[RMDB]
RNA sequence: GGGAACGACUCGAGUAGAGUCGAAAAUGCUGUCGUUGACAGCGCCCAACGCUUCACAACCUGAAAGAAGCGCCUGUUAUCAGGACGGUUGAUCCAUUCACCGGUGCAGACCUCUGCAAACACCGGGUUUAACAAGCAUCUUUCGAGAUGCUUGUAACCAAAUAAUAACGUUCGCGUUAUUAUUUGGAAAAGAAACAACAACAACAAC
Reactivity to DMS in 0.01 (KOAc 150mM, MgCl2 10mM, bicine 150mM(pH8.5), 24C), signal-to-noise 2, nucleotides 027 to 156: u010g030c010u010g000u000c000g060u000u010g010a010c000a010g010c030g020c050c000c020a110a120c010g010c010u020u010c010a200c100a100a100c050c040u000g000a170a140a300g000a060a020g000c020g000c020c020u020g030u000u000a120u010c020a070g010g010a110c080g000g020u010u010g010a240u010c070c040a270u010u000c050a070c010c010g010g020u010g000c010a060g000a210c120c140u010c110u000g040c030a210a160a050c020a000c010c010g000g000g010u000u000u000a110a040c010a010a010g000c000a030u010c000u010u010u010c300g010a020g040a020u010g010c010u000u000g000u000a030a200
Reactivity to 2A3 in 0.01 (KOAc 150mM, MgCl2 10mM, bicine 150mM(pH8.5), 24C), signal-to-noise 6, nucleotides 027 to 156: u150g000c000u000g010u030c080g300u080u300g010a010c000a000g000c000g010c020c000c000a040a010c010g000c000u010u010c030a040c010a130a000c010c010u010g010a010a010a010g000a000a000g000c020g040c000c000u160g040u240u140a200u300c010a000g020g000a010c040g000g000u010u010g010a040u060c100c040a070u090u150c040a080c130c000g010g010u010g010c000a020g110a250c020c110u240c050u130g020c030a070a100a010c030a010c000c000g010g010g010u030u100u050a020a000c000a000a000g000c000a000u000c000u000u130u150c240g110a020g000a000u000g000c000u000u000g000u000a000a010

Source information:
Chemical mapping of a 207-nucleotide RNA with DMS and 2A3. The reactions ran in a buffer of 150 mM KOAc, 10 mM MgCl2 and 150 mM bicine (pH 8.5), at 24 C. 2A3 adducts were read by reverse transcription with SuperScript II with manganese. It was measured as part of the RMDB library M2RFPK.